About this RNA
This 207-nucleotide RNA was probed chemically with 2A3. 2A3 adducts were read by reverse transcription with SuperScript II with manganese. Values cover nucleotides 27 to 156. The data come from the RNA Mapping Database (RMDB), library OK3TST. For 2A3, 428 sequencing reads were counted. High 2A3 reactivity points to a flexible backbone, as in loops and unpaired stretches.
[RMDB]
RNA sequence: GGGAACGACUCGAGUAGAGUCGAAAAUUUCUGAGCCUUUCCUACAUUCAUUUUAAGCAUUUUCCUCCCUGAAAAGAGGAAGUUCUGUUUGCAACCUCAGAGCCCAUAAAUUUUGAGUUCCUCUCAUUUCAGCAAUACUUACAAAUACAUUUGGUAACGAUUAUCGAGCAUUCGUGCUCGAUAAUCGAAAAGAAACAACAACAACAAC
Reactivity to 2A3 in 0.01 (KOAc 150mM, MgCl2 10mM, bicine 150mM(pH8.5), 24C), signal-to-noise 1, nucleotides 027 to 156: u080u040u010c020u020g040a010g030c000c000u000u090u010c030c010u020a060c060a160u080u130c030a050u040u070u080u220a110a020g050c020a050u100u140u150u000c030c000u000c000c020c030u070g060a010a010a010a010g020a000g000g000a000a000g000u070u010c020u030g020u040u050u080g030c020a020a060c000c000u000c000a020g080a030g160c000c000c020a010u050a070a220a010u160u210u060u150g110a030g020u070u050c020c000u090c050u060c070a080u050u140u030c020a030g010c000a040a060u010a100c040u000u020a030c020a020a250a070u060a060c040a170u230u260u140g110g010u100a100a000